An RNA of 207 nucleotides, treated with DMS and 2A3 and read out base by base. DMS (dimethyl sulfate) methylates the pairing face of unpaired adenines and cytosines. 2A3 adducts were read by reverse transcription with SuperScript II with manganese. For DMS, 2,752 sequencing reads were counted. For DMS the reverse transcriptase was MarathonRT. Conditions: 150 mM KOAc, 10 mM MgCl2 and 150 mM bicine (pH 8.5), 24 C. Source: RMDB library OK3TST, as collected in RNAgym. Values are in units of 0.01, from 0 to 300, in steps of 10.
RNA sequence: GGGAACGACUCGAGUAGAGUCGAAAACAACAGGAAAAGACAAGACGAUACUGUAUGAAAGUCUGACCAACAUAAAGGGUGCUACAAGGAUGCCCCCAAGGCUCAGGAUGUUGGAGAGUUGAGGCACCAUGAGUAACCACAAUGCAGAAUGAAGAAAAUAAUGCCAGUAGUUCGCUACUGGCAUUAUAAAAGAAACAACAACAACAAC
Reactivity to DMS in 0.01 (KOAc 150mM, MgCl2 10mM, bicine 150mM(pH8.5), 24C), signal-to-noise 2, nucleotides 027 to 156: c050a090a130c060a240g030g000a050a070a140a110g010a130c050a100a120g030a140c100g030a150u000a060c070u000g050u000a080u010g020a120a110a110g030u000c020u000g010a150c050c000a070a040c070a120u010a040a100a130g020g000g010u010g010c000u010a080c090a080a180g040g010a100u000g010c010c010c000c000c120a120a060g000g030c040u010c010a060g010g030a070u000g000u000u000g000g010a150g000a040g020u000u030g000a150g010g020c030a040c020c020a100u010g010a170g000u020a020a120c020c010a040c090a050a100u000g030c020a080g000a070a070u000g020a100a100g000a110a050a030
Reactivity to 2A3 in 0.01 (KOAc 150mM, MgCl2 10mM, bicine 150mM(pH8.5), 24C), signal-to-noise 1, nucleotides 027 to 156: c010a000a000c010a010g150g000a050a060a060a000g090a000c100a060a030g010a000c010g000a010u050a150c090u040g080u140a100u150g090a140a000a010g040u020c010u010g010a010c000c020a010a030c000a040u090a050a080a030g010g010g000u060g080c000u110a080c020a040a000g220g010a110u100g010c000c000c000c000c000a050a000g120g000c030u010c040a040g040g080a160u160g020u190u030g030g000a030g010a000g000u010u100g010a050g010g000c040a030c000c000a070u050g030a000g050u010a030a010c000c000a010c000a010a050u150g030c050a000g050a070a020u240g110a020a070g080a070a160a080